Chemical mapping of a 177-nucleotide RNA with 2A3 and DMS.
For 2A3 the reverse transcriptase was SuperScript II with manganese.
The RNA was probed in 150 mM KOAc, 10 mM MgCl2 and 150 mM bicine (pH 8.5) at 24 C.
[RMDB]
RNA sequence: GGGAACGACUCGAGUAGAGUCGAAAACUCACUAGUCGAGCGAUCGAGCGUGGAUAAUAAUCGGGCAUAAGCAUAGUACCGAAGAUAUGGAAUUGAAAAAUUGGUAGGGGAGCAUUCUAGUUGCACUUAUUAUUGGAAAAUUCGUUUUCCAAUAAUAAAAAGAAACAACAACAACAAC
Reactivity to 2A3 in 0.01 (KOAc 150mM, MgCl2 10mM, bicine 150mM(pH8.5), 24C), signal-to-noise 9, nucleotides 027 to 126: c000u010c020a030c040u050a030g080u060c030g020a020g020c030g040a070u040c020g030a030g030c030g030u030g010g050a030u040a130a040u100a030a050u130c030g000g020g010c030a040u060a180a020g040c020a050u050a140g040u070a160c010c020g020a040a020g030a040u100a040u100g060g030a040a060u070u120g080a110a110a020a040a080u080u080g040g020u050a040g000g010g000g010a010g010c020a020u080u030c030u050a030g020u020u050g010c030a020c050u020
Reactivity to DMS in 0.01 (KOAc 150mM, MgCl2 10mM, bicine 150mM(pH8.5), 24C), signal-to-noise 9, nucleotides 027 to 126: c020u010c030a100c100u020a090g010u010c030g010a060g020c110g010a080u010c050g010a060g010c070g030u000g010g010a060u020a060a060u010a070a090u010c050g000g000g010c050a080u020a060a100g020c100a060u010a060g020u010a060c020c020g000a060a050g000a090u020a050u010g000g000a070a060u010u020g000a040a070a050a070a080u010u020g000g010u000a050g000g010g010g010a070g010c050a050u020u010c070u010a090g010u010u000g000c100a060c090u010